Chemical mapping of a 177-nucleotide RNA with 2A3 and DMS.
The RNA was probed in 150 mM KOAc, 10 mM MgCl2 and 150 mM bicine (pH 8.5) at 24 C.
2A3 adducts were read by reverse transcription with SuperScript II with manganese.

RNA sequence: GGGAACGACUCGAGUAGAGUCGAAAAUUCAAAAAAGACGGGACAGUUACAGCAGGUAAUGCAUCAGGAAUCAAUGAUGGUGCUGCGAUGAUGUUAGUCAUGUCAGAAGACAAAGCUAAAGAAUUAACCACUCGACAAUGUUCGCAUUGUCGAGUGGAAAAGAAACAACAACAACAAC
Reactivity to 2A3 in 0.01 (KOAc 150mM, MgCl2 10mM, bicine 150mM(pH8.5), 24C), signal-to-noise 1, nucleotides 027 to 126: u000u000c000a000a000a000a000a000a000g110a000c130g000g150g060a000c040a000g090u000u070a000c040a000g000c000a000g080g080u300a300a000u080g000c000a000u000c000a060g160g000a080a000u130c000a140a030u170g000a000u000g000g300u030g000c020u010g140c000g000a130u090g000a000u000g040u300u060a070g050u060c040a080u080g000u000c000a180g000a130a000g000a090c130a160a230a000g000c000u080a090a000a000g080a000a000u300u160a090a000
Reactivity to DMS in 0.01 (KOAc 150mM, MgCl2 10mM, bicine 150mM(pH8.5), 24C), signal-to-noise 1, nucleotides 027 to 126: u020u000c000a000a000a010a050a000a020g010a000c070g000g000g000a000c010a000g000u010u010a040c040a000g000c050a000g050g000u000a010a140u000g000c070a030u000c000a110g010g020a240a180u040c220a190a210u150g060a030u000g070g000u000g000c000u000g000c150g000a130u000g050a000u020g000u000u000a100g000u000c100a220u000g010u010c080a250g000a120a030g000a010c010a170a120a010g000c150u020a010a050a090g000a100a040u020u020a130a100